[RMDB]
RNA sequence: GGGAACGACUCGAGUAGAGUCGAAAACGAUCUGUUCGCAGAUCGAGCUACGGAGACGUAGCGAAGCGAUCCGGUCCUCGGUGGAUCGCGCUACUUGAGAUAUAACCAGAUCCGCCACUCCUAGGAUCUGGCCGAGGACAUAGAGAAAGGAGUGGGAACCAGCUCGUAUGUUCGCAUACGAGCUGGUAAAAGAAACAACAACAACAAC
Reactivity to 2A3 in 0.01 (KOAc 150mM, MgCl2 10mM, bicine 150mM(pH8.5), 24C), signal-to-noise 1, nucleotides 027 to 156: c010g000a000u000c000u010g000u060u030c180g000c080a010g000a000u000c000g000a000g000c000u000a000c000g000g030a060g050a050c020g000u020a000g000c000g000a140a000g000c000g000a000u000c000c000g010g060u020c000c000u010c020g070g010u040g010g000a000u020c010g000c020g000c040u140a120c080u100u190g070a080g040a100u180a050u110a140a080c000c000a000g000a010u020c000c080g030c030c010a000c010u000c000c000u050a020g000g020a030u010c020u040g000g000c000c000g010a000g000g020a000c000a000u300a000g200a030g050a010a050a040g000g000a000g000u000g000g000g000a000
Background:
Chemical mapping of a 207-nucleotide RNA with 2A3. The RNA was probed in 150 mM KOAc, 10 mM MgCl2 and 150 mM bicine (pH 8.5) at 24 C. Values cover nucleotides 27 to 156.